[RMDB]
RNA sequence: GGGAACGACUCGAGUAGAGUCGAAAACCAUGAUGAAAAUGAUUGUUGAGUUGAAAAUUUUUUCUAGCUUGUUUUUUGGGUCAUCAUUUUGUGUGUGUGGCGCUAUCUAUCCUGAGUUUCACGGGGUGCACAUGAAUAUUUUCGAAUAUUCAUGUGCAAAAGAAACAACAACAACAAC
Reactivity to 2A3 in 0.01 (KOAc 150mM, MgCl2 10mM, bicine 150mM(pH8.5), 24C), signal-to-noise 1, nucleotides 027 to 126: c020c000a020u170g020a060u080g060a020a030a030a050u220g070a220u040u050g010u120u040g000a110g000u020u020g120a050a150a100a170u210u090u010u020u040u060c010u000a040g000c020u060u000g080u140u000u050u000u090u080g050g020g010u030c050a060u000c000a010u050u000u190u160g140u040g000u000g000u000g010u040g030g010c080g000c120u050a040u040c010u010a040u060c010c010u040g010a020g020u000u010u000c030a030c070g020g060g000g070u040
Reactivity to DMS in 0.01 (KOAc 150mM, MgCl2 10mM, bicine 150mM(pH8.5), 24C), signal-to-noise 1, nucleotides 027 to 126: c010c010a080u060g020a100u020g000a080a110a080a080u030g000a080u010u000g000u000u020g020a120g000u020u020g000a060a030a120a060u000u000u060u000u010u010c030u000a090g010c040u010u010g020u000u010u000u010u000u000g010g000g020u010c030a020u010c030a050u020u020u010u020g000u020g010u000g030u020g030u010g000g000c070g000c060u000a020u000c100u010a110u010c040c000u000g000a120g020u000u000u000c040a050c130g000g040g000g020u010
About this RNA:
The record gives the reactivity of an RNA of 177 nucleotides to 2A3 and DMS. It was measured as part of the RMDB libraries RFM100 and RFMREP. 2A3 adducts were read by reverse transcription with SuperScript II with manganese.